[RMDB]
RNA sequence: GGGAACGACUCGAGUAGAGUCGAAAAACACGACCCAUCUGCCGGGGAUCACCGAGUACGCGAUCUGUAUGCCUGACGGCCACCAGGGGUAUGGCUUCCCCGUUGGUGGGGUCGGCGCGCUCGAUGCGUCCUAUAUCGGAUUCGUCCGAUAUAGGACAAAAGAAACAACAACAACAAC
Reactivity to 2A3 in 0.01 (KOAc 150mM, MgCl2 10mM, bicine 150mM(pH8.5), 24C), signal-to-noise 4, nucleotides 027 to 126: a000c060a000c060g090a060c000c020c010a040u040c070u110g040c030c030g010g000g000g060a060u120c040a030c070c020g010a020g040u030a030c030g000c020g040a040u020c010u080g160u170a160u150g040c020c010u110g110a060c080g070g060c000c000a000c000c010a020g000g000g000g000u070a080u120g110g000c030u090u080c030c010c000c000g110u100u110g000g000u020g000g010g000g000u010c000g030g000c020g000c000g000c010u010c010g040a060u100g060c040
Reactivity to DMS in 0.01 (KOAc 150mM, MgCl2 10mM, bicine 150mM(pH8.5), 24C), signal-to-noise 4, nucleotides 027 to 126: a080c120a100c160g010a150c020c020c010a110u010c090u010g030c050c020g000g010g000g010a080u000c050a060c050c010g010a050g010u000a040c040g010c030g000a030u000c030u000g020u000a080u010g010c010c000u020g020a090c200g010g020c020c010a020c040c010a090g010g000g000g020u000a040u000g010g000c100u010u000c020c010c000c020g020u000u000g030g020u000g000g000g000g030u000c020g020g020c000g020c030g010c010u010c040g010a070u000g010c300
This 177-nucleotide RNA was probed chemically with 2A3 and DMS. It was measured as part of the RMDB library OK2TRN. DMS adducts were read by reverse transcription with MarathonRT.